[RMDB]
RNA sequence: GGGAACGACUCGAGUAGAGUCGAAAAUAUCAUACUCCGCUUUAAAGCCGUUCAAUGUCACGUGACACAAAGUUGUAGCCGUAUAACAUAUGGCGCUACCAUGUUGUUAUUUAGACGGGUAACAUCACAUUAAUGCCGCGUUCGCGCGGCAUUAAUGAAAAGAAACAACAACAACAAC
Reactivity to 2A3 in 0.01 (KOAc 150mM, MgCl2 10mM, bicine 150mM(pH8.5), 24C), signal-to-noise 2, nucleotides 027 to 126: u150a030u020c030a050u040a080c060u000c000c000g090c050u020u030u080a200a210a030g070c020c000g020u000u000c070a090a090u100g010u060c020a040c250g020u050g000a000c030a000c080a090a140a050g020u030u010g010u010a040g040c040c000g000u000a060u020a300a090c070a010u110a000u050g050g000c000g010c120u030a010c000c000a010u000g080u050u100g000u060u040a030u000u110u040a150g000a030c020g010g010g080u010a040a130c040a090u270c050a000
Reactivity to DMS in 0.01 (KOAc 150mM, MgCl2 10mM, bicine 150mM(pH8.5), 24C), signal-to-noise 1, nucleotides 027 to 126: u020a050u000c110a050u000a060c000u020c020c040g000c010u000u000u000a010a260a120g000c050c020g000u040u020c020a110a090u000g000u000c050a080c170g000u000g000a000c110a000c270a000a070a100g000u000u000g000u050a040g000c010c000g000u000a000u000a050a080c110a300u000a030u020g000g000c300g010c290u040a200c020c000a020u000g000u000u020g000u020u000a050u000u000u030a070g020a070c060g000g000g000u080a030a020c110a030u000c170a050
Source: RMDB library OK1LIB, as collected in RNAgym. Chemical mapping of a 177-nucleotide RNA with 2A3 and DMS. For 2A3 the reverse transcriptase was SuperScript II with manganese.